[RMDB]
RNA sequence: GGGAACGACUCGAGUAGAGUCGAAAAGAUAUGGAUAUUGUUCGUUCUUGGACCUCGGAAACGAGCUAGAACAAACGGGUAUCCUAAGUCAAAUCAAAGAAGGAAUGUUCGCAUUCCUUCUUUGAAACCUAAAGAUAGGCUUCGGCCUAUCUUUAGGAAAAGAAACAACAACAACAAC
Reactivity to DMS in 0.01 (KOAc 150mM, MgCl2 10mM, bicine 150mM(pH8.5), 24C), signal-to-noise 4, nucleotides 027 to 126: g000a040u010a300u000g000g000a010u000a000u000u010g010u000u000c030g000u000u000c000u000u000g030g010a140c300c000u000c000g000g000a070a090a150c000g010a020g020c020u000a020g010a010a010c010a010a010a020c000g020g010g020u000a000u000c000c000u000a070a130g000u000c020a100a110a150u000c000a010a000a000g000a020a020g000g010a020a000u000g010u000u000c240g020c010a000u010u000c000c000u000u000c000u000u000u000g000a010a050a140
Reactivity to 2A3 in 0.01 (KOAc 150mM, MgCl2 10mM, bicine 150mM(pH8.5), 24C), signal-to-noise 3, nucleotides 027 to 126: g020a010u070a030u170g000g020a010u000a020u020u070g020u020u040c040g010u000u000c000u060u110g160g140a300c030c010u020c010g020g040a080a060a020c000g010a010g000c020u010a010g000a020a000c020a010a020a000c060g120g030g020u010a010u020c000c010u020a070a040g070u030c040a030a000a210u040c010a000a000a000g000a000a010g000g010a000a010u010g000u070u140c220g020c130a000u000u000c000c000u000u010c000u000u000u000g000a000a000a000